Notes:
An RNA of 177 nucleotides, treated with DMS and read out base by base. Source: RMDB library TTRINS, as collected in RNAgym. Reactivities are given for positions 27 through 126. The RNA was probed in 150 mM KOAc, 10 mM MgCl2 and 150 mM bicine (pH 8.5) at 24 C.
[RMDB]
RNA sequence: GGGAACGACUCGAGUAGAGUCGAAAAGAUAUGGAUCGAGAACUACUUCUCCACUCCGACGAAGGGGUAAAUGGUCGGAAACGACCAUUUACCCCAGAGGAGUGAAGAGAAGCUCGAUCCUAAGUCACAUGACACUAGACUUCGGUCUAGUGUCAUGAAAAGAAACAACAACAACAAC
Reactivity to DMS in 0.01 (KOAc 150mM, MgCl2 10mM, bicine 150mM(pH8.5), 24C), signal-to-noise 1, nucleotides 027 to 126: g010a040u000a300u000g000g030a000u000c000g020a020g010a180a060c090u000a300c010u000u010c000u000c000c010a010c010u000c000c000g020a210c290g040a180a060g000g010g000g000u000a000a000a000u010g000g030u040c000g030g040a100a120a170c000g030a010c010c010a020u000u000u000a010c000c010c000c000a020g000a130g010g000a000g020u010g020a130a060g000a020g020a090a010g000c010u000c000g000a010u010c010c010u000a010a060g010u000c000a300